[RMDB]
RNA sequence: GGGAACGACUCGAGUAGAGUCGAAAAGAAGGUCGAGUGCACGACCAGAGAGUGCGGUGAGUGACCGACAAAGAGUUCGAAUCGGAACGAACAACCGCAAACGAUCGACUGAAGAUCGAAGUGAGAACCACUAAUCAGCUUUCGAGCUGAUUAGUGGAAAAGAAACAACAACAACAAC
Reactivity to 2A3 in 0.01 (KOAc 150mM, MgCl2 10mM, bicine 150mM(pH8.5), 24C), signal-to-noise 3, nucleotides 027 to 126: g050a050a040g000g000u020c010g040a030g170u160g090c050a040c070g000a000c000c020a010g000a000g000a000g010u080g000c000g030g000u090g000a070g020u090g100a220c010c020g010a010c010a010a120a000g180a030g090u140u270c040g070a000a060u100c030g000g000a020a070c020g090a040a020c020a050a010c010c010g000c000a000a030a040c030g000a010u000c010g100a170c190u250g060a050a010g000a030u020c000g000a030a000g090u180g070a080g030a010a020
Reactivity to DMS in 0.01 (KOAc 150mM, MgCl2 10mM, bicine 150mM(pH8.5), 24C), signal-to-noise 3, nucleotides 027 to 126: g010a180a070g000g000u000c000g000a160g020u050g000c140a090c010g010a020c030c000a060g000a180g030a130g030u010g020c010g000g000u050g010a120g010u000g010a160c020c000g030a120c130a070a120a170g000a110g000u050u040c070g000a110a220u030c090g000g000a300a100c070g010a050a070c050a150a060c010c010g000c000a000a040a140c070g000a020u000c000g000a120c150u050g030a060a110g000a020u010c000g010a040a100g010u020g000a080g010a240a120